Chemical mapping of a 177-nucleotide RNA with DMS and 2A3. The data come from the RNA Mapping Database (RMDB), library OK2TST. Conditions: 150 mM KOAc, 10 mM MgCl2 and 150 mM bicine (pH 8.5), 24 C.
RNA sequence: GGGAACGACUCGAGUAGAGUCGAAAACUAGGAGGACACUUUCGCAUCCAGCUUCCUAAUACAGUGAUUUCUGAUGUCCCUGUACAAAUUUCUGCUCAUCACCUUCACCAGCUCUUACAGAAUAAUGCCAUGGUUACAGUUUCGACUGUAACCAUGGAAAAGAAACAACAACAACAAC
Reactivity to DMS in 0.01 (KOAc 150mM, MgCl2 10mM, bicine 150mM(pH8.5), 24C), signal-to-noise 2, nucleotides 027 to 126: c050u010a080g010g020a050g010g030a100c060a020c080u000u000u010c110g000c060a070u000c030c090a120g010c040u000u000c010c000u000a070a160u010a040c090a060g030u020g000a060u000u010u000c110u070g000a110u000g000u000c010c050c010u000g010u010a090c150a050a030a190u000u000u000c040u000g030c020u000c010a060u010c070a040c050c020u010u000c030a060c100c010a080g000c050u010c000u010u010a080c130a060g010a060a070u000a080a080u000g010
Reactivity to 2A3 in 0.01 (KOAc 150mM, MgCl2 10mM, bicine 150mM(pH8.5), 24C), signal-to-noise 2, nucleotides 027 to 126: c020u030a050g010g060a030g020g000a020c020a000c080u050u140u090c070g000c030a030u030c000c010a010g010c000u030u000c020c030u100a080a040u110a100c050a040g010u040g090a130u020u160u150c090u080g100a110u180g050u020c000c000c000u050g020u090a060c080a030a120a040u060u090u040c060u060g010c000u020c020a070u070c010a060c050c000u050u010c050a060c030c000a040g060c020u030c020u020u120a070c030a070g160a120a100u230a080a000u200g080